[RMDB]
RNA sequence: GGGAACGACUCGAGUAGAGUCGAAAAUGUCACACAGUAGCGAGGGAUGCAAUUAAUUGCAUCUACACCAAGCUCAAGGCUUGGAUUUCGACUAGUGUCGAGACGUUCCCACUCGCUACGCCCACAAUUCCUCCUUAGAGUUCGCUCUAAGGAGGAAAAAAGAAACAACAACAACAAC
Reactivity to 2A3 in 0.01 (KOAc 150mM, MgCl2 10mM, bicine 150mM(pH8.5), 24C), signal-to-noise 2, nucleotides 027 to 126: u090g010u040c000a030c020a000c010a160g020u000a000g000c000g000a020g000g040g000a000u000g000c000a020a020u150u140a150a190u090u020g030c000a000u030c000u010a010c010a020c030c000a000a000g020c000u050c210a140a100g230g020c020u010u020g010g050a040u030u000u000c000g000a000c020u070a060g160u110g110u250c000g000a000g020a010c010g000u000u000c010c000c000a030c000u010c000g000c000u000a010c000g040c000c010c000a100c010a040a090
Reactivity to DMS in 0.01 (KOAc 150mM, MgCl2 10mM, bicine 150mM(pH8.5), 24C), signal-to-noise 2, nucleotides 027 to 126: u000g020u010c140a080c120a120c120a090g020u000a000g020c000g030a010g000g000g020a000u000g000c000a000a020u000u000a110a070u010u000g000c000a000u000c000u000a020c050a120c010c010a000a000g010c000u000c140a110a080g010g010c010u010u000g000g010a150u000u000u000c010g000a010c010u010a060g020u020g000u000c000g010a010g000a090c000g000u000u010c000c000c000a090c010u000c010g020c020u000a010c020g000c020c020c000a050c180a080a150

This 177-nucleotide RNA was probed chemically with 2A3 and DMS. 2A3 adducts were read by reverse transcription with SuperScript II with manganese. The DMS profile rests on 2,518 reads. Source: RMDB library M2PK90, as collected in RNAgym. For 2A3, 1,728 sequencing reads were counted.